Background
An RNA of 207 nucleotides, treated with 2A3 and read out base by base.
RNA sequence: GGGAACGACUCGAGUAGAGUCGAAAAAGUUUGUAUAAGCACUGUUUAAGAAUCCCAGUGCAUGCCAAUUGGUGUUUACAGACGAGUAUGGUAUUGACCAUAUGAUACUAUUCUCUCUCUCAGGAGAGGAGAAUAGAUAACUACAAAGGAUUCACAACCCUACCUGCUAUUUCGAUAGCAGGUAGGGAAAAGAAACAACAACAACAAC
Reactivity to 2A3 in 0.01 (KOAc 150mM, MgCl2 10mM, bicine 150mM(pH8.5), 24C), signal-to-noise 2, nucleotides 027 to 156: a040g070u120u040u060g070u040a080u020a160a070g010c000a000c000u000g040u070u120u110a120a060g020a020a000u000c010c000c000a000g000u000g010c010a010u080g010c010c030a210a280u160u270g020g000u020g020u060u060u060a070c020a010g050a010c010g000a030g000u020a020u020g000g080u020a120u160u290g250a050c020c000a000u000a000u030g070a010u000a050c000u000a000u000u000c000u020c020u000c000u000c020u040c080a120g050g080a010g060a000g080g070a030g000a000a000u000a010g010a000u050a020a050c110u140a060c090a020a120a000g000g000a010u020u020c060a010c030a040a100
2A3 adducts were read by reverse transcription with SuperScript II with manganese.